[RMDB]
RNA sequence: GGGAACGACUCGAGUAGAGUCGAAAAUUCGCCGACUACGCGGCGCUGAUCGACCGGCUCGACCAGCACCGCGCGUUCGUCGAGGCGCAGUUCGAUCAGGUGUUCGCCGACAAGGCGGACGGCGGCAGACCUAGGUGGACUUCGGUCCACCUAGGUCAAAAGAAACAACAACAACAAC
Reactivity to DMS in 0.01 (KOAc 150mM, MgCl2 10mM, bicine 150mM(pH8.5), 24C), signal-to-noise 2, nucleotides 027 to 126: u020u010c010g030c050c000g010a100c120u010a080c130g000c020g020g020c000g000c030u020g000a020u000c000g000a020c060c070g000g020c000u010c020g010a010c000c040a060g050c020a150c100c060g020c120g010c090g000u030u000c180g000u000c010g000a040g000g000c010g010c150a110g010u010u000c000g000a030u010c040a050g020g010u020g040u000u000c000g040c000c000g000a130c230a060a130g010g010c010g000g020a040c010g010g010c010g040g030c280a130
Reactivity to 2A3 in 0.01 (KOAc 150mM, MgCl2 10mM, bicine 150mM(pH8.5), 24C), signal-to-noise 1, nucleotides 027 to 126: u110u030c030g040c010c010g020a060c060u180a030c070g040c020g030g060c050g000c000u040g010a020u000c010g000a010c000c030g240g040c080u010c020g000a000c010c040a000g050c010a030c060c080g110c010g000c040g050u050u010c010g030u020c010g000a000g010g000c010g060c070a090g040u110u110c000g000a060u040c030a000g040g090u040g070u070u050c010g010c020c000g020a060c070a150a040g020g000c000g040g010a000c000g010g020c010g040g000c010a010